RNA sequence: GGGAACGACUCGAGUAGAGUCGAAAAAUCAAAUCCAGCUGUUCCAGAUUCUAUUAAGGGCAGUGAUAGAAACUGUGAUAUUUUAUUGACAUACCGUCUUGCGGCCAAGUUAUCAAGAGCAUUGAAGCCGAUUUAAUAUGUUCGCAUAUUAAAUCGGAAAAGAAACAACAACAACAAC
Reactivity to DMS in 0.01 (KOAc 150mM, MgCl2 10mM, bicine 150mM(pH8.5), 24C), signal-to-noise 4, nucleotides 027 to 126: a030u030c110a040a060a080u020c030c010a060g000c110u000g010u010u000c050c000a040g000a150u000u000c030u000a030u000u010a070a150g000g000g030c060a030g010u010g000a030u010a020g000a050a030a050c020u000g000u030g000a030u020a030u010u010u030u010a060u040u010g000a040c060a140u020a090c090c090g020u010c050u010u010g010c060g010g020c040c040a030a080g010u010u000a070u010c060a030a070g010a080g020c070a110u000u020g010a070a090g020
Reactivity to 2A3 in 0.01 (KOAc 150mM, MgCl2 10mM, bicine 150mM(pH8.5), 24C), signal-to-noise 9, nucleotides 027 to 126: a000u120c050a050a030a020u030c020c020a010g030c050u050g030u130u100c010c000a050g020a100u080u040c030u060a120u110u140a130a110g020g030g000c010a010g040u010g060a020u030a060g070a020a060a020c040u030g040u100g120a040u050a170u100u160u080u070a140u050u120g030a030c020a060u100a070c010c010g030u020c010u040u130g020c010g010g000c030c010a070a050g030u060u030a050u090c040a060a010g020a010g080c110a110u040u170g100a060a020g040